RNA sequence: GGGAACGACUCGAGUAGAGUCGAAAACGAUGGCGAAUUUGGAUAUGGCGCUCGUGGUAGGCGCGGCAGGCGGAAUCGGCGGCGAAAUGGUUCGGGCGCUGCGCGGCGCGGGCUGGCGCGUGAGGGAAUUUACCCUGGUAUUCGUACCAGGGUAAAUAAAAGAAACAACAACAACAAC
Reactivity to DMS in 0.01 (KOAc 150mM, MgCl2 10mM, bicine 150mM(pH8.5), 24C), signal-to-noise 4, nucleotides 027 to 126: c070g000a060u010g000g010c020g010a060a090u010u000u010g010g010a100u000a070u010g010g020c040g010c040u000c070g040u000g010g000u010a080g010g000c040g020c040g010g010c040a060g000g020c030g020g000a070a050u010c060g010g010c070g000g020c040g010a050a060a070u010g010g000u000u000c040g010g010g010c040g010c040u000g020c080g010c050g010g000c050g010c060g010g010g000c040u000g000g010c050g010c040g010u010g010a070g000g000g000a140
Reactivity to 2A3 in 0.01 (KOAc 150mM, MgCl2 10mM, bicine 150mM(pH8.5), 24C), signal-to-noise 2, nucleotides 027 to 126: c030g050a050u110g070g000c010g040a050a090u090u070u160g070g060a070u070a110u270g080g000c040g020c040u040c020g030u040g040g090u060a090g060g000c050g000c000g040g020c030a030g060g070c000g000g040a060a060u050c030g020g010c030g000g040c030g040a050a080a040u150g050g020u090u040c010g040g030g000c050g000c050u040g010c130g000c020g080g000c040g010c040g030g020g000c040u000g030g000c050g030c010g030u040g040a060g050g030g000a040